[RMDB]
RNA sequence: GGGAACGACUCGAGUAGAGUCGAAAAGAUAUGGAGUUGAACUACUCGUGAAGCAGCGAAGAACUCGGAAACGAGGGAGCUGUGGAGGCGAGCAACUCCUAAGUCAAAACACACCUUCGGGUGUGAACAUAUUUACUAGCUUCGGCUAGUAAAUAUGAAAAGAAACAACAACAACAAC
Reactivity to 2A3 in 0.01 (KOAc 150mM, MgCl2 10mM, bicine 150mM(pH8.5), 24C), signal-to-noise 5, nucleotides 027 to 126: g040a010u060a050u180g010g000a010g010u020u000g040a110a050c050u180a040c010u300c000g020u040g040a030a010g000c010a000g010c020g160a300a020g020a120a080c010u000c000g000g030a090a080a030c020g010a000g010g010g000a020g000c020u000g000u040g010g030a100g160g210c010g000a010g000c000a000a000c000u000c000c000u010a050a010g010u000c010a000a050a130a120c010a000c000a010c000c000u030u120c300g140g000g000u000g000u000g010a000a000
Reactivity to DMS in 0.01 (KOAc 150mM, MgCl2 10mM, bicine 150mM(pH8.5), 24C), signal-to-noise 7, nucleotides 027 to 126: g020a040u000a300u010g000g000a020g010u010u000g010a070a040c050u010a280c000u000c010g010u000g000a300a260g000c010a000g010c000g010a080a150g000a090a230c000u010c010g000g000a120a080a200c000g000a020g010g010g000a050g010c010u000g000u000g010g000a220g020g000c020g020a020g000c010a010a020c000u000c000c000u000a030a070g000u000c030a110a100a100a160c010a010c000a010c000c000u000u010c220g010g000g020u000g000u000g000a070a170